[RMDB]
RNA sequence: GGGAACGACUCGAGUAGAGUCGAAAAGCCUUCAUGGUGGAGCGGUGCCGCAGACCCCCUCGGGGAUGCGGCAGCAGCACCGUCGGUGUUUGCGCUCGGCAUCGACAACGGCAACGGAGGCGGGCGCGUGACGUACUAUAUUCGUAUAGUACGUCAUAAAAGAAACAACAACAACAAC
Reactivity to DMS in 0.01 (KOAc 150mM, MgCl2 10mM, bicine 150mM(pH8.5), 24C), signal-to-noise 9, nucleotides 027 to 126: g010c010c010u000u020c040a110u020g010g020u000g000g010a150g020c050g010g010u010g010c000c000g010c000a010g000a220c020c000c010c120c180u040c290g000g010g000g010a210u000g000c000g010g010c000a010g010c020a120g010c010a100c010c010g010u010c020g000g010u000g000u000u010u020g010c000g010c010u000c010g010g000c000a010u000c000g000a040c060a130a130c150g010g000c130a100a100c120g010g010a080g000g000c010g000g000g010c010g010c010
Reactivity to 2A3 in 0.01 (KOAc 150mM, MgCl2 10mM, bicine 150mM(pH8.5), 24C), signal-to-noise 9, nucleotides 027 to 126: g030c010c010u050u070c110a170u230g120g010u080g030g060a090g040c040g030g240u070g000c000c020g020c020a070g050a300c000c000c000c010c090u220c220g000g000g000g000a010u010g000c000g080g000c000a000g010c000a010g010c000a010c010c010g010u000c000g000g000u010g020u010u030u100g010c000g000c000u000c000g010g000c000a010u000c000g020a020c020a140a070c090g090g010c050a090a030c070g070g030a030g040g060c000g010g010g000c010g000c000

About this RNA:
The data come from the RNA Mapping Database (RMDB), library OK1LIB. An RNA of 177 nucleotides, treated with DMS and 2A3 and read out base by base. Reactivities are given for positions 27 through 126. DMS adducts were read by reverse transcription with MarathonRT. The RNA was probed in 150 mM KOAc, 10 mM MgCl2 and 150 mM bicine (pH 8.5) at 24 C.